[RMDB]
RNA sequence: GGGAACGACUCGAGUAGAGUCGAAAAGGCGCGUAGCAAUGUUAGUGAUAACUUACAGCAUAACUGUAGACGUUAAGACAAUGUGCACAGCUAGCACUACUGAUGGCGAGACACGACAUGCUAGUGCGAUUAUAUAUUAAUUCGUUAAUAUAUAAUCAAAAGAAACAACAACAACAAC
Reactivity to DMS in 0.01 (KOAc 150mM, MgCl2 10mM, bicine 150mM(pH8.5), 24C), signal-to-noise 9, nucleotides 027 to 126: g010g010c000g010c020g020u010a030g000c010a040a050u010g010u000u000a060g030u010g010a130u020a040a050c110u020u010a040c030a010g000c160a160u060a090a190c020u000g000u000a020g010a160c050g020u000u000a040a080g010a110c140a050a080u030g010u010g010c000a060c130a100g030c160u030a070g000c030a030c030u010a060c130u000g000a100u010g000g000c040g000a130g010a160c030a010c020g000a020c030a020u000g000c010u000a030g000u000g010c020
Reactivity to 2A3 in 0.01 (KOAc 150mM, MgCl2 10mM, bicine 150mM(pH8.5), 24C), signal-to-noise 9, nucleotides 027 to 126: g080g000c000g000c020g100u030a000g000c020a080a140u020g000u020u030a150g000u010g050a120u040a100a030c000u010u040a010c010a010g030c030a120u090a280a110c010u010g000u010a010g020a080c030g000u010u040a080a010g060a040c030a060a080u110g010u010g020c000a010c010a030g050c040u070a010g000c010a000c000u060a010c020u030g040a040u060g040g000c010g010a030g010a020c000a000c000g010a000c000a000u010g000c000u000a000g000u010g000c010